RNA sequence: GGGAACGACUCGAGUAGAGUCGAAAAGACGGGAGUUUCGUGAACCGCCGCUGUCUGCGAUGCCCGUGGAAUACCUAACCCCGAGAAUUGAAGACCGUGCGCUCGAGGUGCAGACCUUGCUUGCCGAUACGCCGAGCUGAUUCGUCAGCUCGGCGUAAAAAGAAACAACAACAACAAC
Reactivity to 2A3 in 0.01 (KOAc 150mM, MgCl2 10mM, bicine 150mM(pH8.5), 24C), signal-to-noise 1, nucleotides 027 to 126: g000a010c020g000g130g000a150g090u000u050u000c100g010u070g000a070a020c000c020g110c000c000g020c270u010g080u010c000u060g040c000g030a000u060g000c050c000c000g000u000g060g020a030a000u160a170c000c000u030a050a200c000c090c000c000g060a050g020a150a090u120u240g000a000a000g000a000c000c060g050u040g010c000g000c090u000c020g150a070g000g030u060g030c040a030g000a000c000c020u110u000g000c000u000u150g000c000c000g010a050